[RMDB]
Conditions: 150 mM KOAc, 10 mM MgCl2 and 150 mM bicine (pH 8.5), 24 C. Structure probing data (DMS and 2A3) for a 177-nucleotide construct. Reactivities are given for positions 27 through 126. For 2A3, 1,014 sequencing reads were counted. For DMS the reverse transcriptase was MarathonRT. Source: RMDB library OK2TST, as collected in RNAgym.

RNA sequence: GGGAACGACUCGAGUAGAGUCGAAAACGUGCGCGUUGGGUCCAAUGCCAGGGCUUGAUCUUUACCAAGCUGCUGAUGUGAUCGUGGGGGAGACUGGUGACUGUAUGGCUCUGCCUGAGCUGGUGCAGCUUACCAUCUUCUUCGGAAGAUGGUAAGCAAAAGAAACAACAACAACAAC
Reactivity to DMS in 0.01 (KOAc 150mM, MgCl2 10mM, bicine 150mM(pH8.5), 24C), signal-to-noise 2, nucleotides 027 to 126: c080g020u000g000c040g010c040g020u000u000g010g000g000u000c040c060a080a130u000g010c060c040a020g000g000g010c040u000u000g000a040u000c160u010u010u010a070c110c030a020a040g010c030u000g020c030u000g010a100u000g010u010g010a050u010c060g010u010g010g010g010g010g000a090g010a080c110u000g020g020u000g010a110c050u000g000u010a090u000g010g000c000u000c030u000g010c090c110u000g000a050g000c020u000g020g010u000g020c060a060
Reactivity to 2A3 in 0.01 (KOAc 150mM, MgCl2 10mM, bicine 150mM(pH8.5), 24C), signal-to-noise 1, nucleotides 027 to 126: c020g030u060g030c070g040c020g040u020u120g080g060g050u000c050c000a090a090u060g030c010c020a020g070g040g000c000u010u060g040a090u080c020u100u110u050a090c060c030a000a020g070c000u200g070c000u020g010a110u100g150u110g050a070u060c090g060u090g000g010g000g000g040a030g030a020c070u070g030g040u040g020a050c010u000g000u120a110u110g020g030c010u000c010u000g020c030c090u040g010a010g000c040u050g050g030u060g020c010a000